[RMDB]
RNA sequence: GGGAACGACUCGAGUAGAGUCGAAAAGAUAUGGAGUUGGCGAGCGAAGAACCGAAACUAUAUCGGAAACGAUAUACCGAGUAGGGGAGCUCGAGACUCCUAAGUCAAAGAGUGGUUCGCCACUCAACAGUUUAAUUGACUUCGGUCAAUUAAACUGAAAAGAAACAACAACAACAAC
Reactivity to DMS in 0.01 (KOAc 150mM, MgCl2 10mM, bicine 150mM(pH8.5), 24C), signal-to-noise 3, nucleotides 027 to 126: g000a040u000a300u030g000g010a010g010u010u030g010g010c020g020a040g000c030g000a090a210g010a120a260c000c000g000a180a140a110c080u000a010u000a010u000c000g000g010a090a060a160c000g010a000u010a000u000a010c250c030g010a070g020u000a140g010g010g000g010a070g020c020u000c000g000a300g000a010c000u010c010c000u000a030a100g000u010c050a060a140a080g010a010g030u000g010g020u010u010c300g010c010c000a010c010u000c020a050a170
Reactivity to 2A3 in 0.01 (KOAc 150mM, MgCl2 10mM, bicine 150mM(pH8.5), 24C), signal-to-noise 3, nucleotides 027 to 126: g020a000u070a030u170g020g000a020g020u050u080g300g300c000g010a010g000c000g140a300a060g020a090a050c000c010g010a020a010a020c050u030a000u000a000u040c000g040g000a020a100a010c010g000a000u000a000u000a030c110c030g020a030g020u050a020g010g030g000g020a000g000c000u000c000g010a010g000a010c000u000c000c010u020a120a020g010u030c040a090a160a070g010a000g010u010g010g050u050u090c260g060c080c000a000c000u010c010a000a030